[RMDB]
Chemical mapping of a 177-nucleotide RNA with DMS. The reactions ran in a buffer of 150 mM KOAc, 10 mM MgCl2 and 150 mM bicine (pH 8.5), at 24 C. The data come from the RNA Mapping Database (RMDB), library OK2TRN. Values cover nucleotides 27 to 126.
RNA sequence: GGGAACGACUCGAGUAGAGUCGAAAAUAACGCCGGAUUAAACGAAAUAGCAUCACAUUGGGUAUUGCCAUGGACAAUGCCAAGUAAUUACGGUUAUGUAAUGGAAGUAGGAAGUGGAACUGGAACAUACUGCCCUAGCUUUCGAGCUAGGGCAGUAAAAAGAAACAACAACAACAAC
Reactivity to DMS in 0.01 (KOAc 150mM, MgCl2 10mM, bicine 150mM(pH8.5), 24C), signal-to-noise 1, nucleotides 027 to 126: u000a050a130c140g000c010c030g030g010a080u000u000a050a070a060c110g000a020a160a110u020a110g000c030a030u000c060a150c040a090u000u020g020g020g020u000a010u010u030g000c020c080a040u010g020g000a040c130a050a020u000g030c020c020a090a070g000u020a060a070u000u000a010c070g000g010u000u000a040u040g000u010a020a060u000g010g010a040a130g000u000a080g000g000a090a050g010u000g000g000a030a040c060u010g020g000a070a070c160a170